Chemical mapping of a 177-nucleotide RNA with 2A3 and DMS. For 2A3, 38,056 sequencing reads were counted. The RNA was probed in 150 mM KOAc, 10 mM MgCl2 and 150 mM bicine (pH 8.5) at 24 C. 2A3 adducts were read by reverse transcription with SuperScript II with manganese.
RNA sequence: GGGAACGACUCGAGUAGAGUCGAAAACGCACAACCCCACCGGGCUGGUCUUUUCGUGGGCGGAACUGACCGAACUCGUCGCCCUGGCCCGCGAGCACGACCUGUGGCUCAUCAGCGACGAGGUGUAAGUGAUAAUAUGGUUCGCCAUAUUAUCACUAAAAGAAACAACAACAACAAC
Reactivity to 2A3 in 0.01 (KOAc 150mM, MgCl2 10mM, bicine 150mM(pH8.5), 24C), signal-to-noise 9, nucleotides 027 to 126: c070g060c020a070c030a080a180c020c010c000c000a010c020c020g010g010g010c040u050g010g020u030c030u020u100u040u030c040g030u090g040g060g020c030g030g020a040a040c050u070g050a050c020c030g020a080a060c010u010c020g010u010c010g010c020c020c020u030g090g020c010c000c000g030c040g020a010g010c030a030c090g170a270c030c070u150g030u140g070g010c020u010c040a120u060c030a020g010c000g010a010c010g010a020g000g020u050g030u050a080
Reactivity to DMS in 0.01 (KOAc 150mM, MgCl2 10mM, bicine 150mM(pH8.5), 24C), signal-to-noise 7, nucleotides 027 to 126: c100g020c080a070c100a090a160c080c000c010c040a110c120c050g000g000g000c030u020g010g000u000c020u000u000u010u010c020g000u010g000g010g010c020g000g000a060a060c080u010g010a080c050c050g020a100a080c020u000c030g000u000c010g010c010c070c070u010g010g000c030c000c010g000c160g000a030g000c060a080c070g000a110c150c090u020g000u030g010g020c010u000c030a080u030c160a150g010c010g000a020c020g000a010g010g010u010g000u030a110